[RMDB]
RNA sequence: GGGAACGACUCGAGUAGAGUCGAAAAUGAAAAGAGACUAGUUGGCGGCAAAGGGGGAAAUGUGGAAGCCAGUUAAGAAGCCAUCAUAACCCAGAAGGUGAUGCCUAAUAACAUCUCUCUGGGAGCAGCGGAGAGAUGAUAAGGGUUUGCCUUCUGAACUAAAUUUUAGUUUCGACUAAAAUUUAGUAAAAGAAACAACAACAACAAC
Reactivity to DMS in 0.01 (KOAc 150mM, MgCl2 10mM, bicine 150mM(pH8.5), 24C), signal-to-noise 1, nucleotides 027 to 156: u000g000a110a050a100a090g020a180g000a120c030u010a100g020u020u000g050g030c040g000g000c030a030a100a070g020g000g000g050g000a000a040a050u000g020u020g020g000a090a120g030c040c030a070g040u000u000a070a080g000a090a100g020c060c040a080u000c070a140u000a060a110c080c070c050a070g010a040a010g040g010u000g000a050u000g030c010c000u000a100a130u000a100a170c000a000u010c000u010c020u000c000u020g010g000g020a150g040c110a080g020c050g020g000a050g000a040g000a030u020g010a060u010a060a300g000g020g000u030u000u010g010c010c010u000u000c000u010g030a050
Reactivity to 2A3 in 0.01 (KOAc 150mM, MgCl2 10mM, bicine 150mM(pH8.5), 24C), signal-to-noise 2, nucleotides 027 to 156: u070g010a010a050a000a070g050a010g010a000c020u030a050g030u050u010g040g020c060g010g020c090a090a080a160g060g010g010g020g020a060a090a060u130g010u050g030g010a020a000g030c040c030a010g020u030u030a070a020g020a060a000g030c050c020a020u060c020a020u090a100a030c040c060c000a000g010a000a000g000g020u040g030a020u130g040c000c010u080a120a090u100a100a040c000a000u000c000u000c000u020c000u020g030g040g060a050g020c040a010g050c010g000g000a000g000a000g000a000u010g000a010u030a070a080g010g000g000u020u020u030g000c000c000u000u020c010u010g000a000
Annotation: Conditions: 150 mM KOAc, 10 mM MgCl2 and 150 mM bicine (pH 8.5), 24 C. This 207-nucleotide RNA was probed chemically with DMS and 2A3. For 2A3, 3,004 sequencing reads were counted. It was measured as part of the RMDB library OK3TST. Reactivities are given for positions 27 through 156. For DMS the reverse transcriptase was MarathonRT.